[RMDB]
RNA sequence: GGGAACGACUCGAGUAGAGUCGAAAAACCAUAGCCUGACAAAGAGUUCGGUCCAAUUUGGACGCCCAUUUAGGAGGUGCCAAACAGACCCCAUCAUUGAUUUGAGAUCUUGAUAAGGUGAAUACCCAGUCUAUUCAAUGCUAGGCAUAAUGAGUAUAUUCUAGUAACUGUUCGCAGUUACUAGAAUAAAAGAAACAACAACAACAAC
Reactivity to DMS in 0.01 (KOAc 150mM, MgCl2 10mM, bicine 150mM(pH8.5), 24C), signal-to-noise 2, nucleotides 027 to 156: a140c030c020a150u010a200g010c000c010u000g060a100c120a070a020a240g000a150g010u000u000c050g050g000u020c010c050a050a200u000u000u000g050g000a220c030g040c020c000c010a260u010u000u000a120g020g010a080g000g000u000g010c000c000a060a040a020c110a100g000a050c010c000c020c040a040u000c020a050u000u000g000a180u000u000u010g010a110g000a040u000c020u020u000g020a100u000a090a080g010g010u000g000a130a090u000a050c000c020c020a160g010u000c050u000a140u000u010c050a030a140u000g000c070u000a000g000g000c040a080u000a060a070u000g020a110g020u000a140u010
Reactivity to 2A3 in 0.01 (KOAc 150mM, MgCl2 10mM, bicine 150mM(pH8.5), 24C), signal-to-noise 4, nucleotides 027 to 156: a000c020c000a030u070a000g030c000c000u040g040a050c070a050a160a030g070a040g070u170u300c100g010g000u000c030c030a140a180u040u020u050g030g030a180c000g000c000c030c010a140u160u140u180a090g020g050a060g050g000u010g000c000c000a000a030a010c010a010g020a030c010c000c020c020a010u040c000a030u020u120g050a050u080u050u180g100a070g010a040u030c030u100u070g020a050u070a160a060g000g000u020g030a030a060u110a060c020c020c040a010g020u000c010u020a040u020u050c030a040a020u070g030c030u110a020g020g000c020a040u090a110a080u210g050a010g070u090a050u010

The record gives the reactivity of an RNA of 207 nucleotides to DMS and 2A3. The RNA was probed in 150 mM KOAc, 10 mM MgCl2 and 150 mM bicine (pH 8.5) at 24 C. 2A3 adducts were read by reverse transcription with SuperScript II with manganese.